This 207-nucleotide RNA was probed chemically with DMS and 2A3. The data come from the RNA Mapping Database (RMDB), library RNAMAK. The 2A3 profile rests on 3,535 reads. 2A3 adducts were read by reverse transcription with SuperScript II with manganese.
RNA sequence: GGGAACGACUCGAGUAGAGUCGAAAACUGGGAGCUUCGGCUCCCAGAAAAAGCGUACUACUGCUCGAACGUUGAAAGUAGGAACUACUGGUUCCCAAAUAGGAACCAGCCUACUGGAGUGAGCAGUAUCGCAAAAAUGGUAUCUUCGGAUACCAAAAGCUUAUUAUCAUUUCGAUGAUAAUAAGCUAAAAGAAACAACAACAACAAC
Reactivity to DMS in 0.01 (KOAc 150mM, MgCl2 10mM, bicine 150mM(pH8.5), 24C), signal-to-noise 4, nucleotides 027 to 156: c010u010g000g010g020a030g030c020u000u010c300g090g030c010u010c010c010c000a000g000a000a040a050a070a110g020c030g010u010a070c130u000a020c020u000g010c000u000c000g020a120a120c090g010u010u010g000a190a090a060g020u000a030g000g000a090a100c050u000a300c000u000g010g000u000u010c000c000c000a030a120a230u000a050g010g010a010a030c010c000a010g040c010c010u000a000c000u000g000g000a260g020u000g000a050g020c010a030g010u000a010u000c020g020c030a020a020a030a080a100u000g010g010u000a010u000c010u000u000c300g040g010a030u000a000c000c000a010a030a100
Reactivity to 2A3 in 0.01 (KOAc 150mM, MgCl2 10mM, bicine 150mM(pH8.5), 24C), signal-to-noise 3, nucleotides 027 to 156: c000u010g010g020g000a000g020c010u050u060c230g140g000c000u060c000c000c000a000g000a000a000a000a010a000g020c010g020u050a030c030u000a010c010u040g010c010u010c040g180a210a080c040g070u120u130g050a100a030a010g010u000a010g020g020a080a020c090u220a060c000u300g000g020u000u020c030c020c000a200a290a040u240a070g010g000a000a000c000c000a000g000c000c000u010a000c000u000g000g010a040g020u110g010a000g000c000a010g010u010a010u080c000g000c010a060a120a000a000a000u070g000g000u000a000u000c010u040u090c300g080g000a010u000a000c000c000a050a120a000